Background
An RNA of 207 nucleotides, treated with 2A3 and read out base by base. Conditions: 150 mM KOAc, 10 mM MgCl2 and 150 mM bicine (pH 8.5), 24 C. It was measured as part of the RMDB library OK3TST. The 2A3 profile rests on 699 reads.
[RMDB]
RNA sequence: GGGAACGACUCGAGUAGAGUCGAAAAUAAUUUGACCGCGAGGUCAAUGUUCUCCUUUAAAUAAUCUUGAGCAUCCUUGGAGAACUCCUUUUCGUCUGAUUCAUGGCGCUCAACGUACAGGCGAAUAGUGGCACCACUACUUCCGGUACCAGAGAGACGGUUUUAGUGAUUUCGAUCACUAAAACCGAAAAGAAACAACAACAACAAC
Reactivity to 2A3 in 0.01 (KOAc 150mM, MgCl2 10mM, bicine 150mM(pH8.5), 24C), signal-to-noise 2, nucleotides 027 to 156: u110a000a050u020u000u030g000a000c010c000g000c050g020a030g000g020u020c000a000a000u040g000u000u000c020u050c020c120u080u240u290a240a210a160u270a030a110u030c050u070u180g040a040g040c000a030u060c030c070u050u110g010g000a010g010a070a020c000u080c030c020u050u060u020u030c020g010u000c010u020g060a250u140u070c090a090u160g100g000c050g000c100u040c050a050a050c100g020u070a000c000a010g030g000c020g030a010a000u060a040g030u080g030g140c070a030c040c020a030c090u140a050c000u170u010c050c020g010g030u040a050c000c060a040g050a000g020a070g000a100
For 2A3 the reverse transcriptase was SuperScript II with manganese.